[RMDB]
The record gives the reactivity of an RNA of 177 nucleotides to DMS and 2A3. For 2A3 the reverse transcriptase was SuperScript II with manganese. DMS adducts were read by reverse transcription with MarathonRT.
RNA sequence: GGGAACGACUCGAGUAGAGUCGAAAAGAUAUGGACAAUGACUUGACAUGAAGAUGUUCGGAAACGAACAUAACUUCAACAGCAAGUAUUGUCCUAAGUCAAAGUGCACCCGUUCGCGGGUGCACAACUUGAACAUAUUGUUCGCAAUAUGUUCAAGAAAAGAAACAACAACAACAAC
Reactivity to DMS in 0.01 (KOAc 150mM, MgCl2 10mM, bicine 150mM(pH8.5), 24C), signal-to-noise 5, nucleotides 027 to 126: g000a020u010a080u020g000g010a020c000a000a000u010g010a040c000u000u000g010a050c090a190u020g000a030a000g020a080u000g000u000u000c000g010g000a030a020a060c000g010a020a000c000a000u000a070a100c010u000u000c000a080a110c190a250g000c000a010a010g000u000a010u000u000g010u000c000c000u000a000a050g010u000c010a100a130a160g010u000g010c010a000c000c000c000g030u000u020c280g020c010g010g000g030u000g000c000a000c000a010a060
Reactivity to 2A3 in 0.01 (KOAc 150mM, MgCl2 10mM, bicine 150mM(pH8.5), 24C), signal-to-noise 6, nucleotides 027 to 126: g010a000u020a010u060g000g010a010c010a020a010u080g190a220c000u020u000g010a050c030a300u200g000a000a000g010a010u010g010u000u010c000g000g010a020a010a010c010g000a000a010c000a010u020a150a120c000u010u020c050a230a170c140a290g030c000a000a000g000u010a020u010u000g000u000c010c000u000a010a010g010u000c040a140a110a090g000u010g000c000a010c000c040c020g000u070u060c300g010c010g060g020g010u000g000c000a000c000a000a000
The DMS profile rests on 10,481 reads.